[RMDB]
Structure probing data (2A3 and DMS) for a 207-nucleotide construct.
DMS adducts were read by reverse transcription with MarathonRT.
2A3 adducts were read by reverse transcription with SuperScript II with manganese.
It was measured as part of the RMDB library OK3TST.
RNA sequence: GGGAACGACUCGAGUAGAGUCGAAAAGCAGACCGUGCGACAGGAAAGCAAUUUUCAGCGUUCCUUCAACGCUACCGUGCGCGGCAUCGUCUCUCGAGACGACGUACUAGUCGGGUUGAUGCAUUUGUGGGACUUUGUGGAGGCUUACGUGGGCAACGAUACCCUCCAUAUUCGUAUGGAGGGUAUCAAAAGAAACAACAACAACAAC
Reactivity to 2A3 in 0.01 (KOAc 150mM, MgCl2 10mM, bicine 150mM(pH8.5), 24C), signal-to-noise 4, nucleotides 027 to 156: g040c050a020g010a100c020c020g030u050g010c030g090a060c030a170g060g040a090a060a020g040c110a130a120u130u030u080u200c090a030g000c000g040u080u120c030c000u120u140c060a040a020c020g020c050u070a060c010c030g050u050g040c050g000c000g040g020c030a070u020c010g020u010c010u000c000u010c040g050a040g010a020c010g010a010c010g020u040a060c010u060a050g070u060c020g010g030g020u020u060g030a080u100g030c050a090u070u060u100g080u090g030g030g010a030c030u100u080u090g060u080g020g040a070g010g020c020u060u060a030c050g020u110g000g010g030c020a090a010c080
Reactivity to DMS in 0.01 (KOAc 150mM, MgCl2 10mM, bicine 150mM(pH8.5), 24C), signal-to-noise 3, nucleotides 027 to 156: g050c070a080g000a120c020c040g020u010g040c030g020a200c220a060g000g010a030a070a080g020c050a140a110u010u000u010u000c080a160g040c030g010u000u000c020c070u000u000c080a080a100c030g040c000u000a100c030c040g020u020g010c030g000c050g030g000c020a040u000c020g010u000c010u000c040u000c220g020a130g030a060c010g030a040c010g050u000a080c050u010a070g010u000c040g000g020g020u010u000g020a070u010g010c050a200u000u000u000g010u000g020g010g000a070c080u000u010u010g020u000g000g030a120g010g030c040u000u010a040c050g040u020g000g020g040c020a080a060c120